[RMDB]
RNA sequence: GGGAACGACUCGAGUAGAGUCGAAAAGAUAUGGAAGCGCACACAGGAGCGGAUCGGAAACGAUCCGAACUACUCCGUGUGAACUACGCUUCCUAAGUCAAAAGGUUUAACGUUCGCGUUAAACCAAGUGUAACUGUAUCUUCGGAUACAGUUACACAAAAGAAACAACAACAACAAC
Reactivity to DMS in 0.01 (KOAc 150mM, MgCl2 10mM, bicine 150mM(pH8.5), 24C), signal-to-noise 3, nucleotides 027 to 126: g010a040u000a300u000g020g010a050a000g030c000g000c010a040c000a030c010a190g040g000a020g030c000g010g000a010u000c000g000g000a130a100a170c060g010a020u000c000c000g020a020a020c020u010a300c030u000c010c030g020u000g000u000g000a070a110c230u010a280c050g000c020u010u010c000c000u000a010a040g000u000c030a090a120a080a160g000g000u000u000u000a000a020c000g000u000u030c270g000c020g010u000u000a000a010a020c000c010a020a030
Reactivity to 2A3 in 0.01 (KOAc 150mM, MgCl2 10mM, bicine 150mM(pH8.5), 24C), signal-to-noise 2, nucleotides 027 to 126: g020a020u050a050u090g000g010a000a010g040c020g090c040a000c020a000c090a180g000g010a000g010c000g000g000a000u000c000g030g000a030a060a010c020g000a010u000c020c010g000a010a020c030u190a020c000u000c000c010g000u000g000u010g000a010a010c040u170a050c140g000c010u000u000c000c000u000a050a000g010u010c060a060a010a040a210g000g010u000u010u000a020a020c020g010u040u110c300g000c010g170u020u000a000a020a000c000c010a000a010